Structure probing data (2A3 and DMS) for a 207-nucleotide construct.
The 2A3 profile rests on 1,229 reads.
Values cover nucleotides 27 to 156.
It was measured as part of the RMDB library RNAMAK.
The DMS profile rests on 1,760 reads.
The reactions ran in a buffer of 150 mM KOAc, 10 mM MgCl2 and 150 mM bicine (pH 8.5), at 24 C.
[RMDB]
RNA sequence: GGGAACGACUCGAGUAGAGUCGAAAACCGUAGGGCAAUGGGAGAAUUGAAAUACAGCGAAGAACAACGAUUCGAAAGAGUCGUUGGGAGCUGUAUCGUACGUUCGAAGAACAUUGCCCUAAACGGAAAGUAAACGAGGCUUCGGCCUCGUUUACAAGAUAGGACUUCUCUUCGGAGAAGUCCUAUCAAAAGAAACAACAACAACAAC
Reactivity to 2A3 in 0.01 (KOAc 150mM, MgCl2 10mM, bicine 150mM(pH8.5), 24C), signal-to-noise 2, nucleotides 027 to 156: c010c000g010u040a020g000g000g000c000a010a000u000g010g030g010a060g030a070a040u170u210g040a140a040a010u010a010c010a010g030c000g150a300a030g040a070a000c000a000a000c000g000a000u000u000c010g040a040a090a050g000a000g010u020c000g000u000u020g000g000g000a030g000c010u000g010u010a010u000c010g050u080a080c050g010u000u020c010g020a110a030g010a010a010c010a000u000u000g040c020c000c000u000a000a000a000c000g050g000a150a060a080g000u000a000a020a000c000g000a000g020g010c020u140u300c300g040g000c020c000u030c000g000u000u000u000a000c000a000a000
Reactivity to DMS in 0.01 (KOAc 150mM, MgCl2 10mM, bicine 150mM(pH8.5), 24C), signal-to-noise 1, nucleotides 027 to 156: c010c000g000u000a000g040g000g000c000a020a060u000g010g000g000a120g010a010a020u000u000g010a190a030a010u000a000c000a020g040c000g000a090a210g040a100a090c000a020a040c020g010a040u000u000c010g000a180a200a290g010a010g020u000c000g000u000u000g000g010g000a290g010c010u000g050u000a000u000c000g010u000a250c300g020u000u000c000g000a130a160g010a110a040c010a000u000u000g000c000c000c000u000a000a060a050c020g000g000a160a070a180g030u000a000a000a060c010g040a020g000g000c010u000u020c300g060g070c000c030u000c000g000u010u000u000a000c000a160a140